[RMDB]
Background
Structure probing data (DMS) for a 177-nucleotide construct. The DMS profile rests on 1,533 reads.
RNA sequence: GGGAACGACUCGAGUAGAGUCGAAAAGAUAUGGACGUGAAUUUCCCUGCGCCAUGUCGGAAACGACAUGCGCAAGAAACACGUCCUAAGUCAAAGGAGCUCGCUUCGUUCGCGAAGCGAGCUCCAAGUAUUGCUUAGUCUUCGGACUAAGCAAUACAAAAGAAACAACAACAACAAC
Reactivity to DMS in 0.01 (KOAc 150mM, MgCl2 10mM, bicine 150mM(pH8.5), 24C), signal-to-noise 2, nucleotides 027 to 126: g020a050u010a300u010g010g010a030c000g010u000g000a230a240u010u020u000c100c060c100u000g000c030g000c190c100a000u000g000u000c020g000g000a150a050a180c020g030a010c000a000u000g010c010g010c000a050a050g000a080a080a090c010a000c000g000u000c010c000u000a010a110g010u000c060a080a200a210g000g010a030g010c000u010c000g040c000u000u000c000g020u000u020c260g020c000g000a000a000g030c010g000a000g000c000u010c020c000a010a010
The RNA was probed in 150 mM KOAc, 10 mM MgCl2 and 150 mM bicine (pH 8.5) at 24 C. The data come from the RNA Mapping Database (RMDB), library TTRDES. Values cover nucleotides 27 to 126.